[RMDB]
RNA sequence: GGGAACGACUCGAGUAGAGUCGAAAAUACUAGCAUUCGGUUCCAACCCUGGAUGGAUACUCAAAGGUUGGCUGAGUUCCUUCCUGCGGCCUUGGUUCCGAUGCUCCAUCCAAGGCCGGAAACCAAAACUUGAGGAUGUUUUCGAACAUCCUCAAGUAAAAGAAACAACAACAACAAC
Reactivity to 2A3 in 0.01 (KOAc 150mM, MgCl2 10mM, bicine 150mM(pH8.5), 24C), signal-to-noise 2, nucleotides 027 to 126: u200a040c070u020a000g000c010a030u030u250c030g020g010u010u010c030c000a020a020c020c010c020u000g000g000a010u010g020g010a040u080a200c000u010c030a030a170a130g290g030u220u130g220g060c080u020g000a010g000u010u010c000c000u010u010c000c000u020g010c210g050g000c040c050u030u010g000g030u020u020c010c010g000a000u010g010c000u000c000c020a030u000c000c010a040a040g070g000c040c010g080g030a080a070a080c080c030a030a100a030
Reactivity to DMS in 0.01 (KOAc 150mM, MgCl2 10mM, bicine 150mM(pH8.5), 24C), signal-to-noise 3, nucleotides 027 to 126: u020a090c160u000a010g010c000a050u000u010c010g010g020u010u000c000c010a040a140c020c000c000u000g000g000a020u000g000g000a020u000a020c010u000c010a030a080a120g020g010u000u010g020g010c120u000g010a030g020u000u000c000c010u000u010c010c000u000g010c140g020g000c160c120u000u000g010g000u000u010c020c010g010a020u000g010c020u000c050c040a040u000c010c020a040a120g010g010c110c130g010g000a060a100a100c100c070a060a060a120
Chemical mapping of a 177-nucleotide RNA with 2A3 and DMS. The 2A3 profile rests on 2,699 reads. For DMS, 2,996 sequencing reads were counted. Values cover nucleotides 27 to 126. It was measured as part of the RMDB library M2PK90. The RNA was probed in 150 mM KOAc, 10 mM MgCl2 and 150 mM bicine (pH 8.5) at 24 C.